[RMDB]
RNA sequence: GGGAACGACUCGAGUAGAGUCGAAAACACGGCAUUCAGGUUGGCUAAGGAGGGAUGAACCGGGCCAGGGGUGAAAACCAGCAGCCAAGAGUUCCCGUGGUAAGCAGUAGUGGGAUAGCGUACCGGAGUGGACUGCCACUAUCAGCCUAGCCAAUUGGAAAGAAUUUAGGUUCGCCUAAAUUCUUUCAAAAGAAACAACAACAACAAC
Reactivity to DMS in 0.01 (KOAc 150mM, MgCl2 10mM, bicine 150mM(pH8.5), 24C), signal-to-noise 2, nucleotides 027 to 156: c040a200c080g010g020c080a190u010u010c070a090g010g000u000u000g010g010c020u000a110a110g030g000a130g000g020g010a110u000g000a110a120c040c030g030g030g020c000c020a130g010g010g020g060u010g000a060a040a120a070c030c020a080g020c070a100g010c000c010a020a100g000a220g000u010u000c000c020c000g010u000g000g040u000a040a070g040c020a210g000u000a080g010u030g020g000g000a170u000a150g010c000g010u010a080c030c010g010g040a170g030u000g020g010a070c040u000g000c000c030a040c040u000a050u010c040a150g000c040c020u000a090g020c000c020a020a170u000u010g010
Reactivity to 2A3 in 0.01 (KOAc 150mM, MgCl2 10mM, bicine 150mM(pH8.5), 24C), signal-to-noise 4, nucleotides 027 to 156: c070a020c030g070g000c080a060u090u100c090a110g060g000u030u020g020g010c020u050a120a190g050g010a050g030g060g000a040u070g030a070a060c030c040g020g000g000c010c040a030g040g020g000g000u050g050a010a040a020a060c020c010a010g060c040a010g010c030c010a080a020g040a010g060u020u010c000c010c000g000u030g000g000u040a060a030g000c030a020g010u090a020g050u140g050g030g050a160u090a030g060c030g050u050a080c000c020g030g040a070g060u110g020g040a060c030u030g010c030c000a010c010u020a030u070c030a010g010c000c000u020a020g010c000c010a010a030u050u070g050